[RMDB]
RNA sequence: GGGAACGACUCGAGUAGAGUCGAAAAACGUGUACGCCAAGCUAUCUUAAACACUGUUAAAUUUUGUGACCACAUGGUCAAGGCUGGUUUAGUCGGUGUGCUCACACUAGACAACCAGGACCUUAAUACGCAUGUCAGUUCGCUGACAUGAAAAGAAACAACAACAACAAC
Reactivity to 2A3 in 0.01 (KOAc 150mM, MgCl2 10mM, bicine 150mM(pH8.5), 24C), signal-to-noise 9, nucleotides 027 to 129: a000c040g010u040g010u050a020c050g010c020c020a030a010g010c020u060a050u160c040u080u150a090a100a020c050a030c050u060g080u100u140a070a120a200u160u160u100u130g120u060g020a030c010c010a090c090a270u290g020g000u020c030a010a000g010g000c000u000g010g000u020u030u090a030g000u000c000g000g000u010g010u030g070c060u140c070a020c000a000c010u040a120g000a010c000a000a000c000c000a000g010g010a010c000c000u020u020a060a020u140a100c100g010
Reactivity to DMS in 0.01 (KOAc 150mM, MgCl2 10mM, bicine 150mM(pH8.5), 24C), signal-to-noise 9, nucleotides 027 to 129: a040c110g000u020g000u030a070c160g030c040c040a070a080g020c080u020a010u020c050u020u010a090a080a060c080a040c060u010g030u010u020a070a100a100u030u020u010u020g020u010g000a050c000c010a120c160a150u040g020g040u020c040a020a010g010g020c000u000g020g030u000u020u050a040g000u010c000g000g000u010g030u030g030c220u010c190a090c020a000c000u010a070g030a000c010a070a020c010c010a020g000g000a090c060c000u020u020a050a050u010a070c200g030

Chemical mapping of a 170-nucleotide RNA with 2A3 and DMS. Conditions: 150 mM KOAc, 10 mM MgCl2 and 150 mM bicine (pH 8.5), 24 C. For DMS the reverse transcriptase was MarathonRT.